Conditions: 150 mM KOAc, 10 mM MgCl2 and 150 mM bicine (pH 8.5), 24 C. Structure probing data (DMS and 2A3) for a 177-nucleotide construct. For 2A3, 23,070 sequencing reads were counted. For DMS, 28,711 sequencing reads were counted. For 2A3 the reverse transcriptase was SuperScript II with manganese. It was measured as part of the RMDB library OK1LIB.
RNA sequence: GGGAACGACUCGAGUAGAGUCGAAAACUAUUUAUAGACAGAACAGUGGAAAAAGUAUAUCGAUAUAAAACUUAAACAAAGAUUCUUGCAGUGGUACGAUUCCACAUAGGCGAGGCAUAAGCGAAAGGUGUUGUUUAAUAUUCGUAUUGAGCAACGCAAAAGAAACAACAACAACAAC
Reactivity to DMS in 0.01 (KOAc 150mM, MgCl2 10mM, bicine 150mM(pH8.5), 24C), signal-to-noise 9, nucleotides 027 to 126: c020u000a040u020u020u020a060u020a090g010a090c090a070g000a060a080c080a090g000u000g000g000a030a040a070a100a080g010u010a040u010a070u010c040g010a070u020a070u010a040a050a070a080c060u010u010a050a060a110c140a040a080a060g000a080u010u010c050u010u010g010c070a090g010u000g010g010u000a050c150g000a210u010u020c000c020a010c020a080u040a070g010g000c030g020a030g000g000c100a050u010a040a080g010c080g000a040a060a050g000
Reactivity to 2A3 in 0.01 (KOAc 150mM, MgCl2 10mM, bicine 150mM(pH8.5), 24C), signal-to-noise 7, nucleotides 027 to 126: c010u000a050u020u120u050a150u070a020g090a030c050a010g120a120a020c020a030g070u070g050g040a040a060a000a020a010g070u050a070u020a020u120c030g020a010u040a020u060a150a120a030a040c030u070u100a100a050a020c040a020a070a010g060a080u080u100c010u020u080g000c020a020g010u020g010g050u070a080c110g060a090u140u060c000c000a030c010a030u050a030g190g000c020g010a020g010g000c020a050u070a050a040g040c040g070a080a010a010g080